Structure probing data (2A3 and DMS) for a 177-nucleotide construct.
[RMDB]
RNA sequence: GGGAACGACUCGAGUAGAGUCGAAAAGUAGUGUAUGUUUAGUAGGACAUGGAGCUGCGUGUAGUGAGUGCCUAGGUGUUAUCCCUAGGGUGUUAGACUCGGCUACUCUGACAGCCUGAAGGGAUGACCGCGUUACUACGUUCGCGUGGUGGCGCGGAAAAGAAACAACAACAACAAC
Reactivity to 2A3 in 0.01 (KOAc 150mM, MgCl2 10mM, bicine 150mM(pH8.5), 24C), signal-to-noise 1, nucleotides 027 to 126: g040u100a010g000u050g010u030a100u070g010u000u050u000a030g030u010a020g040g010a020c000a020u060g060g010a080g020c000u020g000c040g000u060g000u000a000g000u000g010a000g000u050g150c000c000u000a020g000g000u070g060u200u300a120u050c000c000c000u000a010g000g000g000u040g050u030u130a020g000a000c000u000c020g020g050c010u010a010c010u000c020u040g040a080c020a010g090c010c000u020g030a050a040g010g030g010a020u010g030a000
Reactivity to DMS in 0.01 (KOAc 150mM, MgCl2 10mM, bicine 150mM(pH8.5), 24C), signal-to-noise 1, nucleotides 027 to 126: g000u010a010g000u010g000u000a010u010g010u010u000u000a080g010u010a060g000g010a040c050a050u000g010g010a130g020c040u010g030c010g070u000g000u000a090g000u000g000a300g010u000g000c000c030u000a050g000g010u060g000u080u170a300u160c110c000c000u000a080g000g000g010u010g020u010u030a070g010a000c060u010c060g000g020c080u000a030c090u010c020u010g000a090c030a020g020c010c020u000g020a070a070g010g010g010a020u020g000a140
For DMS the reverse transcriptase was MarathonRT. Conditions: 150 mM KOAc, 10 mM MgCl2 and 150 mM bicine (pH 8.5), 24 C. Reactivities are given for positions 27 through 126.